[RMDB]
The record gives the reactivity of an RNA of 207 nucleotides to DMS and 2A3. The reactions ran in a buffer of 150 mM KOAc, 10 mM MgCl2 and 150 mM bicine (pH 8.5), at 24 C. Values cover nucleotides 27 to 156. DMS adducts were read by reverse transcription with MarathonRT. It was measured as part of the RMDB library M2RFPK.
RNA sequence: GGGAACGACUCGAGUAGAGUCGAAAAGGACUGCGCAGUCCGGCAACAUCAGCAGAGAGCCCGCUAUACGUGACGGAUUGGCUGAAGCGUACAGAAAUAUUGAGCCGCCUGCAAGAGGCAGCCAAGCAAAACGUACGUGAGUUCGCUCACGUACGAAUCAUGCAUAGACGUUCGCGUCUAUGCAUGAAAAAGAAACAACAACAACAAC
Reactivity to DMS in 0.01 (KOAc 150mM, MgCl2 10mM, bicine 150mM(pH8.5), 24C), signal-to-noise 1, nucleotides 027 to 156: g000g000a060c020u010g010c010g000c000a140g010u000c020c000g020g020c010a140a040c090a040u020c000a130g000c030a130g000a180g000a090g000c030c000c050g050c050u000a180u000a080c040g000u000g000a170c020g000g020a220u000u000g000g050c030u000g020a040a300g050c010g070u000a080c040a150g000a070a110a130u000a150u000u000g000a140g020c010c030g000c030c010u000g070c060a190a140g010a030g030g000c000a050g000c000c010a010a060g000c120a060a040a050a180c010g060u000a000c030g060u000g000a040g000u000u020c300g020c040u010c000a010c000g000u000a010c000g010a040a070
Reactivity to 2A3 in 0.01 (KOAc 150mM, MgCl2 10mM, bicine 150mM(pH8.5), 24C), signal-to-noise 2, nucleotides 027 to 156: g040g030a050c040u040g000c100g020c050a030g020u020c020c000g010g000c030a060a090c010a070u140c000a030g050c020a000g100a000g010a040g100c000c060c060g030c040u110a130u000a140c090g010u070g050a020c050g000g040a100u090u070g020g000c000u030g040a070a020g040c070g040u050a040c030a050g160a090a170a030u300a050u090u090g030a060g000c000c000g000c000c000u030g000c050a110a030g070a070g250g000c000a000g000c030c010a020a030g060c050a020a010a010a210c030g000u000a000c000g000u030g000a000g000u020u150c140g000c060u010c010a000c010g000u000a000c000g000a000a000